Chemical mapping of a 177-nucleotide RNA with DMS.
[RMDB]
RNA sequence: GGGAACGACUCGAGUAGAGUCGAAAAUCGCCUGAUGAAAAUACCUUCCAGAGCAGAGAACAACAGUAGAAGUAUGCUGAAAAAGUUAGUAUGAGAAGUUUGAAUUGUUUAGAUAAUAUAAAAGUGACUAUGCAUCUAAGUUCGCUUAGAUGCAUAGAAAAGAAACAACAACAACAAC
Reactivity to DMS in 0.01 (KOAc 150mM, MgCl2 10mM, bicine 150mM(pH8.5), 24C), signal-to-noise 2, nucleotides 027 to 126: u010c130g000c050c010u010g020a050u020g010a080a150a100a150u010a080c080c000u000u000c050c050a050g000a100g000c060a060g020a060g020a060a050c090a050a060c020a030g010u000a080g020a040a100g030u000a050u000g020c030u000g000a040a070a090a080a080g000u000u000a020g000u000a020u010g000a070g020a080a060g000u000u000u000g000a060a080u000u000g000u000u000u010a110g010a110u010a060a040u010a120u000a020a030a070a070g010u000g000a240
Conditions: 150 mM KOAc, 10 mM MgCl2 and 150 mM bicine (pH 8.5), 24 C. Source: RMDB library RFMREP, as collected in RNAgym. Values cover nucleotides 27 to 126.